[RMDB]
RNA sequence: GGGAACGACUCGAGUAGAGUCGAAAAAUACAGUACGAAAGUACAAAGAAGCAAUCAAACCGAGCAGUGAAAUCAUGGCUUCAGUCCAAAAUGGGCAAACACUGCAGACGGAGCCAAAGGCAAAUAAUCAUUGUUUAUCCUUCGGGAUAAACAAUGAAAAAGAAACAACAACAACAAC
Reactivity to 2A3 in 0.01 (KOAc 150mM, MgCl2 10mM, bicine 150mM(pH8.5), 24C), signal-to-noise 2, nucleotides 027 to 126: a020u210a000c040a020g020u010a020c010g030a120a030a020g020u020a000c010a000a100a000g080a050a000g010c060a030a050u090c040a080a020a070c030c000g020a000g000c020a000g000u000g090a110a090a050u150c080a050u070g060g000c000u100u090c030a020g030u020c020c010a080a090a030a280u100g000g000g090c010a010a020a010c040a010c030u030g000c000a000g020a030c040g010g020a000g040c020c000a090a010a020g110g000c020a100a060a040u170a110a030
Reactivity to DMS in 0.01 (KOAc 150mM, MgCl2 10mM, bicine 150mM(pH8.5), 24C), signal-to-noise 2, nucleotides 027 to 126: a060u010a090c130a150g020u000a010c010g000a140a100a150g010u010a010c020a110a130a080g010a090a050g010c060a050a030u000c190a070a150a080c050c000g000a080g030c000a020g030u000g000a080a070a040u010c070a080u000g000g030c010u010u000c050a110g050u000c030c030a050a030a050a040u010g040g010g000c080a060a100a090c030a010c010u000g010c030a050g000a090c060g010g000a050g000c010c020a030a060a070g010g040c090a030a090a050u020a040a110